[RMDB]
RNA sequence: GGGAACGACUCGAGUAGAGUCGAAAAAUAUUAAUCCAAAUUCGUUAGAGAAUAACUUGGUUAAAUUGGGCAUCUUUAAACGUGCUAUCGAGAUUGGCAAUACGCAAUUGAUAACACAACAUGGGUCACUUACUCUCAGGUUCGCCUGAGAGUAAGUAAAAGAAACAACAACAACAAC
Reactivity to DMS in 0.01 (KOAc 150mM, MgCl2 10mM, bicine 150mM(pH8.5), 24C), signal-to-noise 3, nucleotides 027 to 126: a080u020a060u020u030a070a060u050c000c000a050a040a080u030u000c060g010u030u040a060g000a180g010a020a050u000a080a100c040u000u010g000g040u020u010a030a030a100u000u030g020g030g020c120a070u000c030u000u050u010a010a070a080c120g020u010g000c050u000a010u000c010g000a050g010a110u000u010g000g020c040a180a100u050a080c220g010c010a080a030u030u020g000a020u000a000a080c020a000c040a070a080c160a030u040g000g040g020u000c080
Reactivity to 2A3 in 0.01 (KOAc 150mM, MgCl2 10mM, bicine 150mM(pH8.5), 24C), signal-to-noise 5, nucleotides 027 to 126: a000u240a030u120u100a030a030u020c010c000a030a020a020u050u050c000g090u130u180a070g030a010g030a200a080u090a040a080c050u010u050g020g010u040u080a090a040a100u140u110g020g000g000c050a100u060c050u050u180u180a090a060a040c130g010u010g010c010u000a030u010c050g060a060g040a220u070u090g100g050c030a030a180u090a190c140g000c030a010a000u020u020g000a020u030a050a010c010a000c000a060a060c010a070u100g070g000g020u060c020